Chemical mapping of a 177-nucleotide RNA with DMS and 2A3. The data come from the RNA Mapping Database (RMDB), library OK1LIB. DMS (dimethyl sulfate) methylates the pairing face of unpaired adenines and cytosines.

[RMDB]
RNA sequence: GGGAACGACUCGAGUAGAGUCGAAAAGAAAAGCGAUAGCGGAAGAAAGAUGGCAGAGAGAGAGAGACAUCGAAGAAACGCUAUCGCGAAAAGCAGCUGAGUUCUCUCUCUCUGCUCAGCUGCGAAAGGGUAAAUCUAUCUUCGGAUAGAUUUACCCAAAAGAAACAACAACAACAAC
Reactivity to DMS in 0.01 (KOAc 150mM, MgCl2 10mM, bicine 150mM(pH8.5), 24C), signal-to-noise 2, nucleotides 027 to 126: g010a060a060a130a190g000c000g010a010u000a000g000c000g020g040a110a170g020a150a060a050g020a010u000g000g030c090a090g020a010g010a010g020a030g010a140g010a230g000a070c020a010u010c020g000a040a090g000a080a120a070c020g020c000u010a010u020c000g040c000g010a010a030a040a100g000c020a000g000c000u000g000a020g020u020u010c040u020c000u010c000u000c020u010c000u000g000c000u000c000a000g000c000u000g000c050g000a010a040a140
Reactivity to 2A3 in 0.01 (KOAc 150mM, MgCl2 10mM, bicine 150mM(pH8.5), 24C), signal-to-noise 3, nucleotides 027 to 126: g040a000a030a010a000g010c000g000a000u000a000g010c010g040g060a050a050g090a140a260a020g020a040u040g060g010c080a000g060a000g000a020g000a000g000a010g030a010g130a040c000a020u010c050g130a180a030g040a080a040a000c000g000c000u000a000u010c000g000c000g000a000a020a000a000g010c000a000g000c000u000g000a010g020u110u000c050u020c000u000c000u000c000u000c000u000g000c000u010c000a000g000c000u000g000c010g000a060a010a000
For 2A3, 4,147 sequencing reads were counted. The RNA was probed in 150 mM KOAc, 10 mM MgCl2 and 150 mM bicine (pH 8.5) at 24 C.